[RMDB]
RNA sequence: GGGAACGACUCGAGUAGAGUCGAAAACUCCAGCUGAAUCGAAGCGAGUAUCGAUUCAGAGAACUGACUUGAUGCUUUCGCUUAUCUCAACUCAAUGUUGUGAUAGCUGGCACAUUGAGUUAUGUACGAUGAUCAGAUAUUUCGAUAUUUGGUCAUCAAAAGAAACAACAACAACAAC
Reactivity to 2A3 in 0.01 (KOAc 150mM, MgCl2 10mM, bicine 150mM(pH8.5), 24C), signal-to-noise 9, nucleotides 027 to 126: c020u000c010c000a020g010c010u020g030a040a040u040c030g010a040a010g110c050g080a040g080u060a050u010c000g000a000u000u000c000a000g020a000g020a070a010c020u020g010a000c000u010u020g010a010u020g040c020u050u120u120c040g000c030u090u090a040u040c040u000c020a010a010c000u020c080a090a130u210g010u040u020g010u060g020a030u030a030g000c020u060g040g000c020a010c000a040u010u020g010a010g010u020u040a110u190g080u050a040c090
Reactivity to DMS in 0.01 (KOAc 150mM, MgCl2 10mM, bicine 150mM(pH8.5), 24C), signal-to-noise 9, nucleotides 027 to 126: c080u010c010c010a100g010c020u010g010a040a020u010c050g010a030a070g010c120g010a140g010u020a050u000c000g010a010u000u000c000a010g000a170g010a130a020c050u000g010a020c060u010u000g000a030u000g000c050u000u020u030c090g010c010u010u010a030u000c020u000c020a020a010c000u010c180a070a070u040g000u010u000g010u000g000a040u010a020g010c020u010g010g000c200a110c040a020u000u010g000a010g010u000u010a040u020g010u010a120c180
Structure probing data (2A3 and DMS) for a 177-nucleotide construct.
It was measured as part of the RMDB library OK1LIB.
For DMS, 59,279 sequencing reads were counted.
2A3 is a SHAPE reagent: it acylates the 2'-hydroxyl of flexible nucleotides of all four kinds.
The RNA was probed in 150 mM KOAc, 10 mM MgCl2 and 150 mM bicine (pH 8.5) at 24 C.
For 2A3, 137,475 sequencing reads were counted.